[RMDB]
RNA sequence: GGGAACGACUCGAGUAGAGUCGAAAAUGAUCACAAGUCAUUGCCAGCUCUGUUCAUUUUCUUCCCUGGUCUAACUCAAUAAUUGCCAUCAUGAAAAUUCUGGGUGACUUUUGUGACUAAAGUCCCAAACUCGUGACUAUUUCGAUAGUCACGAGUUAAAAGAAACAACAACAACAAC
Reactivity to 2A3 in 0.01 (KOAc 150mM, MgCl2 10mM, bicine 150mM(pH8.5), 24C), signal-to-noise 5, nucleotides 027 to 126: u130g030a090u000c000a010c000a010a000g010u010c000a020u020u200g200c000c000a010g000c020u040c030u100g040u070u030c030a040u030u040u090u040c010u020u070c020c000c000u010g000g000u000c060u070a090a080c010u040c130a080a130u110a130a090u140u080g010c040c010a070u120c030a010u110g050a020a020a030a010u130u030c000u010g030g010g000u020g010a000c000u030u080u140u140g040u010g000a000c010u050a050a020a090g080u040c010c000c040a000
Reactivity to DMS in 0.01 (KOAc 150mM, MgCl2 10mM, bicine 150mM(pH8.5), 24C), signal-to-noise 2, nucleotides 027 to 126: u010g010a100u010c000a030c070a060a050g000u000c000a000u010u020g030c010c020a020g000c090u010c020u000g020u000u000c010a010u010u020u010u020c090u010u000c020c010c010u010g020g020u020c050u010a070a110c090u050c150a090a110u030a060a130u010u000g000c110c030a030u000c220a040u000g000a020a010a030a020u020u020c000u020g000g000g000u010g020a010c010u000u030u030u020g010u000g000a010c070u000a000a160a140g000u000c010c000c000a100
Description: The data come from the RNA Mapping Database (RMDB), libraries RFM100 and RFMREP. The record gives the reactivity of an RNA of 177 nucleotides to 2A3 and DMS. The reactions ran in a buffer of 150 mM KOAc, 10 mM MgCl2 and 150 mM bicine (pH 8.5), at 24 C. For 2A3 the reverse transcriptase was SuperScript II with manganese.